[RMDB]
RNA sequence: GGGAACGACUCGAGUAGAGUCGAAAAAGCCGAGGACUACGGUCAUCGGCAACAACCGUCACAACGGCUUCCUGGCGUGACGGGGUUAACCCCAACGGAGCAAGUGCGAGCUUACGAGCUCGCACAAUUUAGGAGAAUUCCUUCGGGAAUUCUCCAAGAAUGCAAUACUGUUCGCAGUAUUGCAUUCAAAAGAAACAACAACAACAAC
Reactivity to 2A3 in 0.01 (KOAc 150mM, MgCl2 10mM, bicine 150mM(pH8.5), 24C), signal-to-noise 2, nucleotides 027 to 156: a000g000c010c000g000a000g030g010a000c020u060a040c240g120g000u020c000a010u010c020g040g050c000a000a000c000a000a020c010c030g000u000c000a010c010a080a040c060g050g000c010u210u100c020c020u040g040g020c030g000u000g000a010c010g000g000g010g000u070u170a070a050c020c000c000c020a080a040c110g010g010a020g020c020a130a050g040u020g010c020g000a000g030c010u130u050a080c200g070a040g010c000u010c000g010c000a020c000a010a010u030u050u160a070g000g000a000g000a020a000u000u010c000c010u010u090c220g040g000g010a000a000u000u000c000u010c000c000a000a000
Source: RMDB library M2RFPK, as collected in RNAgym. This 207-nucleotide RNA was probed chemically with 2A3.